Structure probing data (DMS and 2A3) for a 177-nucleotide construct.
It was measured as part of the RMDB libraries RFM100 and RFMREP.
RNA sequence: GGGAACGACUCGAGUAGAGUCGAAAAUCUAAAACCAUUUGAUGAAGGGGAUAAUGACUUAUGAAAACGACUAAAUCCGUCAUUACAAUUUUAUUACUCUAAAAGGACUUUGAACACUGUAGCAAAUUAAGACCUGUUAAUUCGUUAACAGGUCUUAAAAAGAAACAACAACAACAAC
Reactivity to DMS in 0.01 (KOAc 150mM, MgCl2 10mM, bicine 150mM(pH8.5), 24C), signal-to-noise 3, nucleotides 027 to 126: u000c060u020a030a050a080a120c050c020a080u010u010u010g020a040u000g010a060a070g010g000g010g010a100u000a040a020u000g000a070c080u010u030a060u010g000a060a050a060a070c130g010a100c230u000a060a100a080u010c090c070g000u000c000a040u000u000a080c060a070a040u020u000u010u030a060u000u000a100c080u030c020u030a030a010a080a080g000g010a050c010u000u010u000g010a030a060c150a040c120u010g000u010a050g010c080a040a050a080u000
Reactivity to 2A3 in 0.01 (KOAc 150mM, MgCl2 10mM, bicine 150mM(pH8.5), 24C), signal-to-noise 1, nucleotides 027 to 126: u010c000u010a020a000a180a110c060c000a110u000u000u090g070a140u000g000a130a010g020g000g000g000a150u190a090a150u000g030a000c050u150u000a030u120g120a230a050a030a000c100g220a200c050u090a000a180a000u010c000c000g000u070c000a000u010u010a170c000a030a050u030u040u040u040a030u000u200a100c000u000c050u050a020a190a000a000g010g090a140c050u120u050u020g000a120a030c070a000c200u000g110u030a000g060c060a040a130a040u010